RNA sequence: GGGAACGACUCGAGUAGAGUCGAAAAUCAAUCAUGUUCGCAUGAUUGAAAAGGUCACGUGACCAAACCACGACACGCGUCGAAGCGACCGAGCCCGGAGGCAAAGUGCAAUCUUCGGAUUGCACAAUCGAAAUGACAAGUUCGCUUGUCAUUUCGAAAAAGAAACAACAACAACAAC
Reactivity to 2A3 in 0.01 (KOAc 150mM, MgCl2 10mM, bicine 150mM(pH8.5), 24C), signal-to-noise 2, nucleotides 027 to 126: u030c000a000a000u010c000a000u000g030u060u050c170g010c100a000u000g020a000u010u000g020a030a000a010a030g020g000u020c040a030c190g170u210g030a020c040c000a050a040a010c040c040a050c070g060a040c020a010c060g080c030g050u080c060g040a090a020g030c030g050a030c000c020g020a010g040c010c000c020g020g040a060g040g000c050a070a030a010g000u000g000c000a000a010u020c000u010u090c270g120g000a000u000u000g000c000a000c000a000a020
Reactivity to DMS in 0.01 (KOAc 150mM, MgCl2 10mM, bicine 150mM(pH8.5), 24C), signal-to-noise 2, nucleotides 027 to 126: u010c000a000a000u010c000a010u000g000u000u020c180g030c010a040u010g000a010u000u000g000a000a100a110a190g000g000u010c010a130c130g020u000g000a060c050c040a050a110a140c050c060a130c050g000a050c070a080c140g010c120g050u000c110g040a080a150g000c060g020a050c050c010g020a050g000c020c010c040g010g000a080g000g020c140a080a060a150g000u010g010c000a000a000u000c000u000u010c200g010g000a010u000u000g020c000a010c000a040a030

An RNA of 177 nucleotides, treated with 2A3 and DMS and read out base by base. The RNA was probed in 150 mM KOAc, 10 mM MgCl2 and 150 mM bicine (pH 8.5) at 24 C.